[RMDB]
RNA sequence: GGGAACGACUCGAGUAGAGUCGAAAAGGGGUCUAGCGGAGCUCAUACAGAGCGAGGAUCUAUACUGAAGCCUCCACGGUAUAGGGAGCUCUGCGGUGAGCGCGAAACGCUAGACGGAGGCACCCAAAACUGAAUCGGCGUUCGCGCCGAUUCAGAAUCUCUACUACUUCUUCGGAAGUAGUAGAGAAAAAGAAACAACAACAACAAC
Reactivity to 2A3 in 0.01 (KOAc 150mM, MgCl2 10mM, bicine 150mM(pH8.5), 24C), signal-to-noise 1, nucleotides 027 to 156: g030g030g100g010u010c010u000a010g020c010g030g140a020g000c000u000c000a010u030a030c010a000g000a000g000c010g030a190g020g000a000u000c000u000a000u010a000c010u020g050a100a010g010c020c060u010c000c000a010c000g000g000u000a010u000a000g010g000g000a000g000c000u010c030u030g010c080g020g030u000g000a000g010c000g010c000g150a130a050a010c000g010c000u000a010g000a000c000g000g010a010g000g000c010a010c010c010c000a060a160a010a010c000u000g010a000a010u000c000g010g000c010g070u100u070c250g010c010g030c100c000g000a000u000u000c000a000g000a000a010

Structure probing data (2A3) for a 207-nucleotide construct. For 2A3 the reverse transcriptase was SuperScript II with manganese. Source: RMDB library RNAMAK, as collected in RNAgym. For 2A3, 1,329 sequencing reads were counted.